[RMDB]
RNA sequence: GGGAACGACUCGAGUAGAGUCGAAAAUUGAGAGCGUUAGUGCGAUACGGUUCUUCAUGCGGCGACGCGCCUGCAUCUUGCGACGGGAUUCCGCGAGCUGCGCGGUGUUCUGCAUAUCAAGCGUAGCUCAGCAGUGGAUGUUCGCAUCCACUGCUGAAAAAGAAACAACAACAACAAC
Reactivity to DMS in 0.01 (KOAc 150mM, MgCl2 10mM, bicine 150mM(pH8.5), 24C), signal-to-noise 2, nucleotides 027 to 126: u000u060g000a120g000a060g010c040g000u010u040a080g020u020g000c060g000a050u030a070c030g000g010u000u010c020u010u000c070a050u000g000c010g030g010c080g000a060c100g000c040g000c040c080u010g000c050a060u000c040u010u010g030c070g000a090c090g000g010g010a100u020u000c030c020g010c070g020a070g000c000u010g000c000g020c020g020g010u000g000u020u010c110u000g000c080a050u050a090u030c070a050a130g020c050g000u000a080g010c070
Reactivity to 2A3 in 0.01 (KOAc 150mM, MgCl2 10mM, bicine 150mM(pH8.5), 24C), signal-to-noise 5, nucleotides 027 to 126: u170u200g060a090g000a000g030c020g020u080u100a080g040u070g100c060g020a010u070a110c050g040g050u040u050c010u080u060c030a050u080g030c020g010g010c030g040a120c060g020c020g030c040c020u050g000c000a070u040c020u040u100g030c030g020a050c020g100g000g080a120u110u040c020c000g050c030g010a030g020c020u090g000c020g000c010g000g030u030g010u020u090c040u120g000c040a040u040a070u200c030a080a000g020c020g050u040a010g000c000